[RMDB]
RNA sequence: GGGAACGACUCGAGUAGAGUCGAAAAUAGACGUAUGGGUGGGGGUUACCUGGCCUCUUUAGGUACCGGGCUAGUAUUUAAACAAGCCUUCUCCCAUGUGGAUAAAUUUAUCAGAAAACUACCUGCCAUUCGAUACACAAUUCGUUGUGUAUCGAAUAAAAGAAACAACAACAACAAC
Reactivity to 2A3 in 0.01 (KOAc 150mM, MgCl2 10mM, bicine 150mM(pH8.5), 24C), signal-to-noise 7, nucleotides 027 to 126: u110a000g070a040c010g020u030a000u000g000g000g000u000g000g000g000g000g010u030u020a030c000c000u010g010g020c000c000u120c000u100u150u200a050g040g010u090a110c010c030g000g010g000c010u020a020g060u030a240u080u250u150a130a200a040c050a050a000g000c000c000u000u010c010u000c000c000c000a010u000g000u020g000g020a020u120a040a120a050u150u190u090a150u130c040a020g190a070a090a010a020c050u110a070c010c000u010g050c050c020
Reactivity to DMS in 0.01 (KOAc 150mM, MgCl2 10mM, bicine 150mM(pH8.5), 24C), signal-to-noise 4, nucleotides 027 to 126: u030a040g010a130c030g030u010a000u000g040g020g030u010g000g000g010g010g010u010u030a150c090c010u000g010g000c020c010u000c150u010u010u030a010g010g000u040a050c130c140g010g000g020c120u020a030g000u000a130u040u040u020a090a110a150c270a080a140g000c000c000u000u000c030u000c000c000c010a020u000g010u000g000g000a060u020a040a080a070u020u010u020a070u060c100a120g000a080a060a080a120c190u010a070c040c030u000g000c140c080
Structure probing data (2A3 and DMS) for a 177-nucleotide construct.
Values cover nucleotides 27 to 126.
The RNA was probed in 150 mM KOAc, 10 mM MgCl2 and 150 mM bicine (pH 8.5) at 24 C.
Source: RMDB library OK1LIB, as collected in RNAgym.
2A3 adducts were read by reverse transcription with SuperScript II with manganese.